[RMDB]
RNA sequence: GGGAACGACUCGAGUAGAGUCGAAAAAGAAUCUCCUUCGGGAGAUUCUGAACCACUAAGCUGUUUGCGGAUGACGACGAGGCAGCUCGUGUCGAGCAACCACCGAGAACAGGUUCGCCUGUUCUAAAAGAAUAAUAUGAUUCGUCAUAUUAUUCUUAAAAGAAACAACAACAACAAC
Reactivity to DMS in 0.01 (KOAc 150mM, MgCl2 10mM, bicine 150mM(pH8.5), 24C), signal-to-noise 9, nucleotides 027 to 126: a010g000a010a000u000c000u000c000c000u000u010c180g030g010g010a010g000a000u000u000c000u000g000a090a210c020c010a110c210u010a090a100g020c130u000g000u000u000u000g010c010g010g010a180u010g000a050c040g010a040c010g010a040g000g020c270a100g010c000u000c020g020u000g010u000c010g010a230g000c030a040a050c040c040a060c120c100g000a040g000a010a010c000a010g000g000u000u010c220g020c000c000u000g010u000u000c000u000a030a060
Reactivity to 2A3 in 0.01 (KOAc 150mM, MgCl2 10mM, bicine 150mM(pH8.5), 24C), signal-to-noise 6, nucleotides 027 to 126: a000g000a010a000u000c010u000c010c010u030u070c190g110g000g000a000g010a000u000u000c000u000g000a000a010c010c010a030c100u100a090a050g050c070u040g060u120u070u100g090c040g060g120a120u240g020a040c170g040a010c010g000a030g020g050c050a140g090c040u010c000g010u020g010u020c020g020a020g010c010a010a030c010c010a040c040c070g160a030g000a040a000c000a000g000g040u030u050c100g060c020c000u000g000u000u000c000u010a030a070